[RMDB]
RNA sequence: GGGAACGACUCGAGUAGAGUCGAAAAAGACUAUUUGUGUUUUAAAGCAGUAACGGUAAAAUCAUAAGGAUUUUUAGCGUCUCGAGCAUAGAACGUUUGGCUUUCUUGCGUGAAAUGACUAAAAUCUAGAUUUGGUCGGUAGGUAUCUCCUUUAAAACUAAUUAUCCCUCUUCGGAGGGAUAAUUAGAAAAGAAACAACAACAACAAC
Reactivity to 2A3 in 0.01 (KOAc 150mM, MgCl2 10mM, bicine 150mM(pH8.5), 24C), signal-to-noise 2, nucleotides 027 to 156: a020g070a020c040u070a140u090u170u060g030u020g050u060u040u080u110a130a080a000g000c010a000g020u040a060a030c030g020g000u030a070a030a020a000u030c080a090u130a300a090g120g010a070u090u120u010u000u150a010g000c010g020u000c000u010c030g020a020g030c010a070u090a290g010a020a020c010g020u080u150u170g070g000c000u020u070u010c000u000u020g000c020g020u140g020a030a010a080u070g020a100c010u030a000a000a020a020u020c020u020a030g030a100u010u000u060g020g000u040c030g050g050u040a010g050g030u040a050u060c040u040c000c000u060u120u140a030a080a010a010
Reactivity to DMS in 0.01 (KOAc 150mM, MgCl2 10mM, bicine 150mM(pH8.5), 24C), signal-to-noise 2, nucleotides 027 to 156: a130g010a160c050u000a090u010u000u010g030u000g010u000u000u000u000a020a080a110g000c060a110g040u000a040a040c020g050g020u000a050a080a040a020u000c020a080u000a150a300g010g010a010u010u010u010u000u010a030g000c010g030u000c020u000c000g030a050g050c000a090u000a020g000a040a030c060g030u000u000u000g060g030c080u000u000u000c000u000u000g020c030g020u010g010a050a040a050u000g010a110c010u000a000a020a030a030u000c030u000a140g010a130u000u000u000g020g030u000c020g010g020u000a030g020g020u000a080u000c020u000c030c020u000u010u000a020a050a060a140
Chemical mapping of a 207-nucleotide RNA with 2A3 and DMS. The RNA was probed in 150 mM KOAc, 10 mM MgCl2 and 150 mM bicine (pH 8.5) at 24 C. The 2A3 profile rests on 1,095 reads. Source: RMDB library OK3TST, as collected in RNAgym. Reactivities are given for positions 27 through 156. DMS adducts were read by reverse transcription with MarathonRT.